This 177-nucleotide RNA was probed chemically with 2A3 and DMS. Conditions: 150 mM KOAc, 10 mM MgCl2 and 150 mM bicine (pH 8.5), 24 C.
[RMDB]
RNA sequence: GGGAACGACUCGAGUAGAGUCGAAAAACAUGAAAAGAAAUUGAAUUCCUGUUGUAGAAUCGUUGAGCGCAACGUCGUACGUGCUGCUCUUCUUGCCGGUUCAUUUGACAAAGUCUAUGAUAUUGGCGGUAACUGUUAAGUUCGCUUAACAGUUACCAAAAGAAACAACAACAACAAC
Reactivity to 2A3 in 0.01 (KOAc 150mM, MgCl2 10mM, bicine 150mM(pH8.5), 24C), signal-to-noise 2, nucleotides 027 to 126: a000c000a040u160g070a040a050a020a180g120a060a130a020u180u100g040a040a040u030u040c000c000u090g120u070u080g110u050a100g100a130a040u160c100g000u020u040g010a000g060c040g000c030a030a160c050g040u020c090g130u240a070c000g000u020g040c020u070g000c000u000c000u050u000c050u010u040g000c000c010g000g000u020u020c000a010u050u110u060g040a030c080a070a220a030g000u020c020u040a010u040g000a020u000a020u210u010g000g030c000
Reactivity to DMS in 0.01 (KOAc 150mM, MgCl2 10mM, bicine 150mM(pH8.5), 24C), signal-to-noise 3, nucleotides 027 to 126: a070c100a070u000g000a060a060a100a070g010a070a050a100u010u010g010a130a130u000u000c010c000u010g000u000u000g020u000a090g020a080a090u010c140g010u000u000g000a020g030c040g010c000a050a050c040g030u000c300g000u000a300c060g030u000g010c000u020g010c000u000c030u000u000c010u020u000g040c000c000g020g020u000u000c010a030u000u010u010g000a030c030a120a080a120g000u000c000u000a030u010g000a050u000a040u010u000g010g010c080
As a SHAPE reagent, 2A3 marks flexible, mostly unpaired nucleotides at the ribose 2'-OH. 2A3 adducts were read by reverse transcription with SuperScript II with manganese.